[RMDB]
RNA sequence: GGGAACGACUCGAGUAGAGUCGAAAAAUCGAGUUGUUGCGUGAGGUGGGUCCGAUGGCGGUAUCCAGCGCCAACAUCUCGGGCCACCCACCCCCGGUCGACGCCGAACAGGCACGCUCUCAACUCGCUCGAGUUUUAAAUUCGUUUAAAACUCGAGAAAAGAAACAACAACAACAAC
Reactivity to 2A3 in 0.01 (KOAc 150mM, MgCl2 10mM, bicine 150mM(pH8.5), 24C), signal-to-noise 2, nucleotides 027 to 126: a000u060c010g010a010g000u000u010g040u040u050g020c030g020u020g020a130g110g010u040g020g000g080u040c020c000g010a050u040g000g000c020g040g030u070a120u060c100c060a060g090c030g000c010c020a030a050c060a200u100c030u010c060g010g000g000c000c020a000c000c010c020a050c000c010c000c040c000g030g020u070c160g140a070c090g000c020c000g020a100a090c040a100g040g130c010a000c000g000c000u000c010u010c000a000a010c000u000c020g000
Reactivity to DMS in 0.01 (KOAc 150mM, MgCl2 10mM, bicine 150mM(pH8.5), 24C), signal-to-noise 3, nucleotides 027 to 126: a050u000c020g020a060g000u000u000g010u000u000g020c030g000u000g020a100g000g030u010g040g020g000u000c000c000g000a030u000g000g010c080g000g020u010a090u020c140c190a180g000c020g010c010c010a040a110c160a120u000c300u010c020g000g020g010c010c110a040c000c010c030a110c020c020c090c040c020g010g010u010c080g030a090c170g000c010c020g000a120a040c290a120g000g010c070a050c010g020c010u000c050u000c000a020a020c000u000c030g030

Source: RMDB library OK2TRN, as collected in RNAgym. The record gives the reactivity of an RNA of 177 nucleotides to 2A3 and DMS. DMS (dimethyl sulfate) methylates the pairing face of unpaired adenines and cytosines. The RNA was probed in 150 mM KOAc, 10 mM MgCl2 and 150 mM bicine (pH 8.5) at 24 C. The DMS profile rests on 2,667 reads.